[RMDB]
This 177-nucleotide RNA was probed chemically with DMS and 2A3.
RNA sequence: GGGAACGACUCGAGUAGAGUCGAAAAAUAUAGAGAUCUCAGAGCAUCCAGCCACAUAUGAUCCUUACAAAGACAAACUUGUUGACCCAGUUUUUGUUGGGGGAGAGUGUGACAGUAAAUUGUGUGACGAAUGGUGAACAUUCGUGUUCACCAUUCGAAAAGAAACAACAACAACAAC
Reactivity to DMS in 0.01 (KOAc 150mM, MgCl2 10mM, bicine 150mM(pH8.5), 24C), signal-to-noise 4, nucleotides 027 to 126: a070u020a100u010a090g010a060g000a070u000c010u010c040a090g000a160g000c030a070u000c040c060a070g000c050c020a070c090a030u010a090u020g010a190u040c030c010u000u010a070c120a040a070a040g010a040c050a050a080a090c100u000u010g010u040u010g010a090c050c020c040a100g000u010u010u000u000u000g000u000u000g040g000g000g000g020a090g010a100g030u000g010u030g000a030c090a030g020u030a060a030a160u010u010g020u010g020u000g010a180
Reactivity to 2A3 in 0.01 (KOAc 150mM, MgCl2 10mM, bicine 150mM(pH8.5), 24C), signal-to-noise 4, nucleotides 027 to 126: a000u190a020u080a000g130a000g020a080u060c080u030c070a060g010a000g040c010a030u030c020c020a020g070c050c000a040c000a000u130a060u180g040a050u070c000c030u020u020a030c010a020a030a000g030a020c070a070a120a030c030u090u140g080u210u100g110a060c000c000c070a050g010u000u020u010u120u050g070u030u060g000g000g000g030g000a050g000a000g010u040g000u010g060a050c030a010g050u120a030a090a230u170u070g040u010g020u020g080a010

The reactions ran in a buffer of 150 mM KOAc, 10 mM MgCl2 and 150 mM bicine (pH 8.5), at 24 C.
For DMS, 5,479 sequencing reads were counted.
For 2A3, 2,262 sequencing reads were counted.
Reactivities are given for positions 27 through 126.